[RMDB]
RNA sequence: GGGAACGACUCGAGUAGAGUCGAAAACGCGCGAUGCAUUACGAUGCUAUACGAUGCUAUAUACGUACGGCUAGCGCGCAUUAUAUAAUAUGCCGAUGCUAAUCGAUCGGCCGAUUACGAUUAGCCGAUGGCUGCCACAAUUCGUUGUGGCAGCCAUAAAAGAAACAACAACAACAAC
Reactivity to 2A3 in 0.01 (KOAc 150mM, MgCl2 10mM, bicine 150mM(pH8.5), 24C), signal-to-noise 2, nucleotides 027 to 126: c030g000c000g000c000g010a050u250g000c020a000u040u060a020c020g030a030u050g000c020u100a060u010a240c120g220a130u090g030c000u030a030u020a040u050a220c010g010u020a010c050g000g000c010u000a000g030c000g000c010g000c020a000u090u000a040u010a060u040a170a250u200a060u140g040c010c030g010a030u060g080c000u020a050a040u060c020g060a040u010c020g090g080c040c010g040a010u080u120a040c020g010a010u030u000a010g020c000c000g110
Reactivity to DMS in 0.01 (KOAc 150mM, MgCl2 10mM, bicine 150mM(pH8.5), 24C), signal-to-noise 3, nucleotides 027 to 126: c020g020c020g020c000g010a180u000g010c010a030u000u000a030c030g010a230u000g020c130u000a080u000a130c290g010a140u010g020c040u000a090u010a100u030a060c000g010u000a030c060g000g020c000u000a180g000c010g000c030g030c040a030u010u010a070u000a200u000a070a130u010a070u010g010c040c010g010a070u010g030c050u000a020a090u010c140g000a020u000c020g000g000c090c070g000a020u010u010a090c150g020a030u000u000a040g000c170c170g010